Record summary: Conditions: 150 mM KOAc, 10 mM MgCl2 and 150 mM bicine (pH 8.5), 24 C. The record gives the reactivity of an RNA of 207 nucleotides to DMS and 2A3. For 2A3 the reverse transcriptase was SuperScript II with manganese.
RNA sequence: GGGAACGACUCGAGUAGAGUCGAAAAUCGCUACACCAGCUCAAGCCGCAUGGGGUGGAUGGAGCACAUCUGAUAAGGGUGUCACCGCAAGGGUUUAUGUCGAUGCUUACACCUACACAACGAAAGCCACAACGGUUGACUUUAAAGCUGAGAAGAAGACAAAUAGCAGUUUCGACUGCUAUUUGUCAAAAGAAACAACAACAACAAC
Reactivity to DMS in 0.01 (KOAc 150mM, MgCl2 10mM, bicine 150mM(pH8.5), 24C), signal-to-noise 1, nucleotides 027 to 156: u030c060g000c040u000a070c030a080c020c040a130g020c020u000c010a120a090g000c060c030g000c080a200u000g020g010g000g070u000g030g020a070u020g000g010a130g020c060a090c010a040u020c040u010g020a130u010a070a100g010g010g010u000g000u000c020a030c030c040g000c020a090a170g010g010g000u010u000u000a060u010g020u010c000g020a080u010g030c030u000u000a080c050a070c070c020u000a100c060a050c060a080a100c060g010a100a040a040g020c000c010a000c030a090a030c040g010g000u040u010g010a020c020u000u000u000a040a050a140g020c000u000g010a130g010a100a120g000a080a180
Reactivity to 2A3 in 0.01 (KOAc 150mM, MgCl2 10mM, bicine 150mM(pH8.5), 24C), signal-to-noise 4, nucleotides 027 to 156: u110c020g010c030u040a010c000a040c020c020a020g060c020u030c060a080a060g040c050c010g040c090a080u060g010g010g020g040u040g040g020a080u050g020g000a040g020c080a010c000a060u030c020u040g060a120u080a180a090g040g000g020u030g020u000c020a020c030c000g000c070a060a050g070g000g000u040u110u070a110u080g060u050c050g060a030u100g000c030u010u030a030c010a020c010c020u070a020c040a010c020a100a100c070g090a100a020a000g030c020c000a040c030a090a010c050g040g000u030u060g020a020c000u060u080u140a080a150a020g010c040u020g040a020g040a170a020g060a060a030